Background
An RNA of 177 nucleotides, treated with 2A3 and DMS and read out base by base. Conditions: 150 mM KOAc, 10 mM MgCl2 and 150 mM bicine (pH 8.5), 24 C. For 2A3 the reverse transcriptase was SuperScript II with manganese. For 2A3, 4,053 sequencing reads were counted.

[RMDB]
RNA sequence: GGGAACGACUCGAGUAGAGUCGAAAAGAUAUGGACCGAUUAGAUCGACGAUCGAGUCACUCGGAAACGAGUGCUCGGGAGAUCAAUCGGUCCUAAGUCAAAACCUGAAUGCUUCGGCAUUCAGGAAGAGUGCGAUUAAGUUCGCUUAAUCGCACUCAAAAGAAACAACAACAACAAC
Reactivity to 2A3 in 0.01 (KOAc 150mM, MgCl2 10mM, bicine 150mM(pH8.5), 24C), signal-to-noise 1, nucleotides 027 to 126: g010a010u010a000u020g000g000a010c000c000g000a020u020u050a160g000a000u080c010g300a300c060g010a040u010c000g000a000g060u190c040a010c000u010c020g000g030a000a030a010c000g010a000g000u000g000c000u010c010g000g000g000a070g010a000u000c000a000a000u010c020g000g010u000c000c000u010a000a020g010u010c010a000a040a110a170c010c000u000g000a010a000u010g000c010u080u070c230g230g010c000a000u000u000c010a000g000g000a010a020
Reactivity to DMS in 0.01 (KOAc 150mM, MgCl2 10mM, bicine 150mM(pH8.5), 24C), signal-to-noise 1, nucleotides 027 to 126: g010a010u000a050u020g000g000a030c000c010g000a020u000u000a120g020a030u020c000g060a110c300g020a020u020c000g010a020g000u020c000a000c000u010c000g000g010a000a020a020c000g010a000g020u000g000c000u000c000g000g010g000a000g020a000u000c000a040a000u000c000g000g030u000c000c000u000a000a050g000u020c000a110a100a200a210c000c010u020g010a010a010u000g000c020u000u020c300g010g000c050a000u000u000c000a000g000g000a010a020